An RNA of 177 nucleotides, treated with DMS and read out base by base. The DMS profile rests on 3,348 reads. It was measured as part of the RMDB library TTRINS.
[RMDB]
RNA sequence: GGGAACGACUCGAGUAGAGUCGAAAAGAUAUGGAUCGUAGUACCUGAUGAUAAGCUCGAUAAGACGCGUUCGGAAACGAACGGCGUCUUUUGACGAGCGAAACAUCAGGUACUACGAUCCUAAGUCCACGUGUAUACACUUCGGUGUAUACACGUGAAAAGAAACAACAACAACAAC
Reactivity to DMS in 0.01 (KOAc 150mM, MgCl2 10mM, bicine 150mM(pH8.5), 24C), signal-to-noise 3, nucleotides 027 to 126: g020a110u000a300u010g000g000a000u000c010g020u000a000g010u000a000c000c000u010g020a020u000g010a040u010a110a300g000c000u000c000g040a210u000a010a010g000a000c000g020c010g000u000u010c000g030g000a130a080a210c000g010a010a010c010g020g050c000g020u000c000u000u000u000u000g020a230c120g010a010g000c000g000a110a200a260c000a010u000c000a000g010g000u010a000c010u000a020c000g010a000u000c000c000u000a010a100g000u000c050